[RMDB]
RNA sequence: GGGAACGACUCGAGUAGAGUCGAAAACAACAAUUACAUGUGCGUUAAGUGCCAUCCGAAAGAGAAGAUGACGAUGGCACGAAAAAUGAAUUUAUUUCAUUUGCGGUGCAUGUAUCGCAAAUCAAAACACCUAGCUACUGUUCGCAGUAGCUAGGUGAAAAGAAACAACAACAACAAC
Reactivity to 2A3 in 0.01 (KOAc 150mM, MgCl2 10mM, bicine 150mM(pH8.5), 24C), signal-to-noise 4, nucleotides 027 to 126: c040a000a010c040a040a040u070u030a020c000a000u020g010u000g010c050g010u040u090a150a040g030u000g000c010c000a000u010c000c000g100a040a070a060g290a020g100a240a030g170a190u090g020a000c000g000a000u010g000g000c000a000c010g000a000a010a010a010a000u020g010a010a000u120u170u120a100u050u100u050c010a010u000u000u040g080c000g160g050u010g000c010a010u000g000u010a010u040c000g030c120a030a080a100u110c030a020a060a010a030
Reactivity to DMS in 0.01 (KOAc 150mM, MgCl2 10mM, bicine 150mM(pH8.5), 24C), signal-to-noise 3, nucleotides 027 to 126: c070a170a040c260a160a050u000u000a000c000a000u000g000u000g030c000g010u040u030a100a210g000u000g000c010c000a000u020c010c040g010a160a040a100g000a170g030a200a100g010a040u010g000a300c300g040a000u000g020g000c000a000c000g000a000a050a000a000a000u000g000a000a000u010u010u030a040u000u000u000c000a020u010u000u000g030c060g070g040u030g020c000a000u000g010u020a000u020c290g000c190a030a080a050u000c050a060a040a180a160
The record gives the reactivity of an RNA of 177 nucleotides to 2A3 and DMS. DMS adducts were read by reverse transcription with MarathonRT. The RNA was probed in 150 mM KOAc, 10 mM MgCl2 and 150 mM bicine (pH 8.5) at 24 C. Values cover nucleotides 27 to 126.